[RMDB]
RNA sequence: GGGAACGACUCGAGUAGAGUCGAAAAAGCUAGAGCAGUUGGUUAAGAACACAAGGAACCCAGCCUUGUGAAUAUGCCAGAGAGGUUGAGAGGUUCCCAACUCCUCCAAGAUCACAACUGCGGCGGGCACCUACAAGGAUUUCGAUCCUUGUAGGUGAAAAGAAACAACAACAACAAC
Reactivity to DMS in 0.01 (KOAc 150mM, MgCl2 10mM, bicine 150mM(pH8.5), 24C), signal-to-noise 5, nucleotides 027 to 126: a090g020c060u010a100g020a180g040c000a010g010u000u000g010g020u010u000a080a070g010a130a170c010a010c010a020a020g010g000a040a080c020c010c010a240g000c000c000u010u000g010u000g010a050a090u000a070u010g010c150c250a070g000a100g010a050g010g000u000u000g000a060g000a090g020g000u000u000c010c010c000a090a100c050u000c010c000u000c020c040a110a110g000a130u000c080a060c030a020a010c050u000g020c020g010g000c040g010g020g010
Reactivity to 2A3 in 0.01 (KOAc 150mM, MgCl2 10mM, bicine 150mM(pH8.5), 24C), signal-to-noise 2, nucleotides 027 to 126: a000g000c040u040a010g030a000g090c000a020g000u040u040g040g030u130u070a170a020g050a180a000c000a000c000a000a010g010g000a080a100c020c010c030a010g110c000c000u000u000g020u000g010a000a030u090a040u090g060c030c000a030g080a020g010a010g090g030u110u040g030a080g000a020g100g090u050u060c000c020c000a000a000c010u000c000c000u000c020c020a050a010g060a120u080c040a020c020a110a000c020u000g010c000g030g000c060g010g000g000
Record summary:
This 177-nucleotide RNA was probed chemically with DMS and 2A3. The reactions ran in a buffer of 150 mM KOAc, 10 mM MgCl2 and 150 mM bicine (pH 8.5), at 24 C.